Structure probing data (2A3) for a 207-nucleotide construct. Values cover nucleotides 27 to 156. Source: RMDB library RNAMAK, as collected in RNAgym. The reactions ran in a buffer of 150 mM KOAc, 10 mM MgCl2 and 150 mM bicine (pH 8.5), at 24 C.
[RMDB]
RNA sequence: GGGAACGACUCGAGUAGAGUCGAAAAGGGGUCCUGACUUGGACCGUGACCAGAGCGACGAUCUAUACUGAAGCCUCCACGGUAUAGGGAGCUCUGGCACGCUAGUCAGGACGGAGGCACCCAAAUAUGCCAUUCCGGUUCGCCGGAAUGGCAUAAAGGAUAUACCGAGUUUCGACUCGGUAUAUCCAAAAGAAACAACAACAACAAC
Reactivity to 2A3 in 0.01 (KOAc 150mM, MgCl2 10mM, bicine 150mM(pH8.5), 24C), signal-to-noise 2, nucleotides 027 to 156: g050g010g060g060u050c020c020u000g000a010c000u140u300g050g030a060c050c000g000u000g030a300c020c000a010g000a000g000c000g290a300c010g000a010u000c000u000a000u000a010c000u040g020a130a040g020c000c010u030c000c000a000c000g010g010u000a000u010a000g000g000g000a010g010c000u000c000u000g000g020c000a000c000g000c000u000a040g000u000c000a010g000g000a000c010g010g000a000g000g010c000a020c020c000c020a020a080a050u100a000u010g000c010c000a020u000u000c000c000g010g020u100u090c190g030c110c000g000g000a000a000u010g000g000c000a000u010a000a000a000